[RMDB]
RNA sequence: GGGAACGACUCGAGUAGAGUCGAAAAGCCACCAACCAUGCACCAGUGGAUUCUGAGCCAUGGUUGAGAUGCAGGGAGUGGGAUGGGGCUCAGGACCAGCUGCAAACCGACCCACCGUGAAAGUUUGAAGCUUGUGUUUGUUCGCAAACACAAGCUUAAAAGAAACAACAACAACAAC
Reactivity to DMS in 0.01 (KOAc 150mM, MgCl2 10mM, bicine 150mM(pH8.5), 24C), signal-to-noise 1, nucleotides 027 to 126: g040c020c000a180c110c000a000a000c010c000a010u010g020c060a180c240c010a020g010u000g020g010a140u010u000c040u000g010a080g010c260c010a030u000g000g010u020u010g030a020g000a090u000g000c070a110g000g000g020a060g070u000g000g030g010a130u010g000g010g010g010c080u010c030a050g000g010a060c090c120a040g010c030u000g000c060a050a090a080c060c020g000a140c010c000c010a050c080c030g010u020g000a060a070a070g010u000u000u010g000